[RMDB]
RNA sequence: GGGAACGACUCGAGUAGAGUCGAAAAGCAACAGAUAACUGGAUGCAGCGUAGGAUUCUACGCAUAUCCAGUACGAAUGGUACCUGUAAAGAAAAUAACAUUGGAUGUACAAGUACCAACAGUGGGUUAAGCGAUGGUGAUGUCAAUCACAUUUGCACCCUAGCUGAUCGUUCGCGAUCAGCUAGGGAAAAGAAACAACAACAACAAC
Reactivity to 2A3 in 0.01 (KOAc 150mM, MgCl2 10mM, bicine 150mM(pH8.5), 24C), signal-to-noise 1, nucleotides 027 to 156: g020c050a000a130c010a020g100a270u070a070a170c020u000g000g000a000u030g180c110a060g020c030g000u000a000g190g000a280u300u190c000u000a000c000g000c030a000u060a000u070c010c000a000g000u000a000c000g020a130a050u100g000g000u000a000c000c000u020g030u040a060a010a000g170a090a030a020a000u200a050a130c150a170u060u180g010g010a100u030g000u000a000c000a060a030g000u000a010c000c000a020a010c010a020g080u040g000g000g010u120u090a040a000g020c000g000a000u020g150g140u000g050a040u040g130u220c050a040a030u000c010a040c020a080u080u140u230g000c040a040

Record summary
Chemical mapping of a 207-nucleotide RNA with 2A3. Reactivities are given for positions 27 through 156. 2A3 adducts were read by reverse transcription with SuperScript II with manganese.